Chemical mapping of a 177-nucleotide RNA with 2A3 and DMS. DMS adducts were read by reverse transcription with MarathonRT. Values cover nucleotides 27 to 126. It was measured as part of the RMDB library OK2TRN. Conditions: 150 mM KOAc, 10 mM MgCl2 and 150 mM bicine (pH 8.5), 24 C.
[RMDB]
RNA sequence: GGGAACGACUCGAGUAGAGUCGAAAACUGCCCCAUCAUCACCAUGCUUAGCAAACGUGUGAGUUUGAGAGGAAGAUUUACAGCUCAGACCUAAUUGCUGGCAAAGUUUAAGGAGAGGACAGGGAGCGCACGUACUACCGUUCGCGGUAGUACGUGCAAAAGAAACAACAACAACAAC
Reactivity to 2A3 in 0.01 (KOAc 150mM, MgCl2 10mM, bicine 150mM(pH8.5), 24C), signal-to-noise 2, nucleotides 027 to 126: c010u040g070c020c000c000c000a040u040c040a020u020c000a050c020c000a050u070g000c010u180u300a050g030c000a060a000a080c050g100u140g070u070g100a080g060u070u120u110g070a080g020a010g090g080a070a080g050a170u000u120u250a060c020a030g010c000u020c020a010g010a010c000c000u010a100a100u010u020g000c000u000g020g000c000a020a070a050g050u110u170u060a120a020g020g010a000g000a000g000g040a020c080a120g070g000g010a070g000c000
Reactivity to DMS in 0.01 (KOAc 150mM, MgCl2 10mM, bicine 150mM(pH8.5), 24C), signal-to-noise 1, nucleotides 027 to 126: c080u000g020c020c030c010c010a190u000c090a080u000c070a060c040c010a200u000g000c030u050u000a060g020c030a010a040a130c250g010u000g030u000g020a070g020u000u030u000g010a170g000a110g000g030a160a080g000a190u000u000u000a060c060a100g000c000u000c000a020g000a030c040c080u000a090a130u000u000g030c000u000g020g050c000a040a140a110g000u010u000u010a090a080g040g010a090g020a060g040g010a030c050a110g000g000g000a080g000c100